This 207-nucleotide RNA was probed chemically with DMS and 2A3. As a SHAPE reagent, 2A3 marks flexible, mostly unpaired nucleotides at the ribose 2'-OH. In probing experiments dimethyl sulfate is read out at A N1 and C N3, which are open when not base-paired. The reactions ran in a buffer of 150 mM KOAc, 10 mM MgCl2 and 150 mM bicine (pH 8.5), at 24 C.
[RMDB]
RNA sequence: GGGAACGACUCGAGUAGAGUCGAAAAGCGUACUACCGUGAGGUCGAGGACAUGCUCUCCCAUAGCUGGUCCCAAAUAGGACCAGCUUAAGGAGAGCAACAGCCUCGACUACCCACCACGGUAUCGCAAAAACCUAGUCACUUCGGUGACUAGGUAAACUCAGUCCAUGGUUCGCCAUGGACUGAGUAAAAGAAACAACAACAACAAC
Reactivity to DMS in 0.01 (KOAc 150mM, MgCl2 10mM, bicine 150mM(pH8.5), 24C), signal-to-noise 1, nucleotides 027 to 156: g000c000g000u000a090c100u000a020c010c000g030u000g000a230g000g000u000c000g000a000g000g040a010c110a300u000g010c000u000c000u010c000c000c030a270u000a000g000c030u020g000g000u020c000c000c000a120a190a140u000a040g000g000a000c000c010a040g050c000u000u000a040a000g000g010a000g000a000g010c010a000a020c000a120g000c040c000u010c000g050a000c000u000a000c000c020c040a300c080c020a000c010g000g010u000a010u000c010g010c030a040a060a000a050a040c000c000u000a020g010u000c020a000c020u000u000c300g030g020u000g000a000c000u000a000g000g010u010a000a000
Reactivity to 2A3 in 0.01 (KOAc 150mM, MgCl2 10mM, bicine 150mM(pH8.5), 24C), signal-to-noise 3, nucleotides 027 to 156: g000c000g010u040a070c030u000a000c000c000g010u000g030a030g000g000u000c000g010a000g000g020a010c030a180u050g000c000u000c020u000c000c000c000a080u100a000g000c000u000g000g020u020c000c030c030a220a300a120u300a150g000g010a000c010c000a010g000c000u000u010a030a000g000g000a000g000a000g040c000a000a000c000a010g010c000c000u000c010g000a000c000u000a010c000c000c000a050c040c000a010c010g000g020u020a030u300c090g000c090a050a130a000a000a030c010c010u000a010g000u000c000a010c040u050u090c270g120g020u000g000a000c000u000a000g000g000u000a030a000